An RNA of 177 nucleotides, treated with DMS and 2A3 and read out base by base.
RNA sequence: GGGAACGACUCGAGUAGAGUCGAAAAUUGGGUGCGGCCCAUUAAAUAGUCCAAGGAGACAGAAAAAUAGUCUGCUAUUUUUAAAAGAUUCUCUACUUUAGGCGAAGAGGUAUCCCAACGACGAAUUAUCUCUCUUAGGAUUCGUCCUAAGAGAGAUAAAAGAAACAACAACAACAAC
Reactivity to DMS in 0.01 (KOAc 150mM, MgCl2 10mM, bicine 150mM(pH8.5), 24C), signal-to-noise 2, nucleotides 027 to 126: u030u010g000g020g080u060g010c030g030g030c020c000c000a020u060u040a020a030a050u040a130g030u000c040c070a100a060g040g000a150g040a100c090a140g030a030a000a110a090a030u000a010g000u060c110u070g020c020u000a040u000u000u000u010u020a040a130a100a180g030a080u020u000c010u010c000u010a090c030u000u000u000a010g000g010c030g050a070a100g030a080g000g000u020a110u010c030c000c030a040a040c130g020a130c130g000a190a070u010u000
Reactivity to 2A3 in 0.01 (KOAc 150mM, MgCl2 10mM, bicine 150mM(pH8.5), 24C), signal-to-noise 6, nucleotides 027 to 126: u130u020g020g000g010u090g060c130g070g230c000c010c000a000u020u030a020a030a010u070a020g020u000c040c050a040a060g110g010a040g030a020c040a050g220a050a100a010a010a000u060a030g030u060c060u090g080c010u070a080u010u030u020u080u140a100a210a020a020g070a040u210u030c000u000c020u030a110c010u030u040u050a040g050g010c030g040a040a030g040a040g110g080u050a110u020c000c000c000a020a030c040g110a010c030g040a010a050u030u000
Overview
DMS adducts were read by reverse transcription with MarathonRT. The reactions ran in a buffer of 150 mM KOAc, 10 mM MgCl2 and 150 mM bicine (pH 8.5), at 24 C.